[RMDB]
RNA sequence: GGGAACGACUCGAGUAGAGUCGAAAACGUCAUCAACAAGGUCCGGUUGGCCGCGAUCGCCGGCGGGGGCACCGUCAUGGCGAAGGCGGCUUCAAAGGCCGCUGCGGCCGCCCUAGCCUGCAUCGCGUGCCAGUAUUUCCUUCGGGAAAUACUGGCAAAAAGAAACAACAACAACAAC
Reactivity to DMS in 0.01 (KOAc 150mM, MgCl2 10mM, bicine 150mM(pH8.5), 24C), signal-to-noise 1, nucleotides 027 to 126: c080g030u000c120a040u010c100a050a080c080a150a110g000g010u010c240c230g010g000u000u010g030g000c110c010g000c000g000a070u000c100g060c000c070g000g000c030g040g000g000g000g060c180a170c070c030g030u010c050a040u010g020g050c130g000a060a250g000g010c050g000g010c000u000u010c100a140a150a190g000g000c010c000g030c020u020g030c010g000g000c050c030g000c010c000c020u000a120g000c000c000u000g000c080a090u010c080g000c030g000